[RMDB]
RNA sequence: GGGAACGACUCGAGUAGAGUCGAAAAGUAUGGAUGCCACCGUGACGGCUCAAUCACACAAGUGCCAACGAUAACGAGGAGCUCGCUAUUGCUGCGUAACUGACGGCCUGACGGUCUGACGUUACAAAAAACGAAAAGUGGUUCGCCACUUUUCGAACAACUAUUGGUGCUUCGGCACCAAUAGUUGAAAAGAAACAACAACAACAAC
Reactivity to DMS in 0.01 (KOAc 150mM, MgCl2 10mM, bicine 150mM(pH8.5), 24C), signal-to-noise 2, nucleotides 027 to 156: g030u000a090u020g030g010a050u000g020c020c020a110c010c020g050u010g000a180c090g010g000c030u030c070a070a120u010c070a050c050a130c040a090a070g020u000g000c010c010a020a100c060g010a070u000a020a050c010g000a170g020g000a100g030c030u000c050g070c000u000a040u000u010g020c000u000g030c040g060u000a020a030c040u000g020a300c300g000g000c020c020u000g020a140c190g020g020u000c000u000g000a300c250g000u000u030a010c030a000a040a030a070a080a110c030g000a010a020a020a020g040u000g000g010u000u000c300g020c040c000a020c000u000u000u000u000c000g000a060a090
Reactivity to 2A3 in 0.01 (KOAc 150mM, MgCl2 10mM, bicine 150mM(pH8.5), 24C), signal-to-noise 4, nucleotides 027 to 156: g090u080a070u120g040g100a050u060g030c020c040a040c040c030g030u030g070a060c040g030g000c030u060c100a060a120u110c040a060c040a030c020a120a110g030u010g050c020c010a030a020c040g050a050u030a130a010c010g010a040g090g040a030g090c020u030c030g000c020u030a050u030u160g040c040u050g030c030g040u010a030a010c000u010g060a010c020g000g010c000c000u150g100a050c100g000g000u010c020u020g020a010c000g000u010u020a010c010a020a030a000a010a010a010c010g000a000a000a000a000g010u010g030g000u050u050c130g100c040c000a010c000u000u000u000u000c000g000a030a000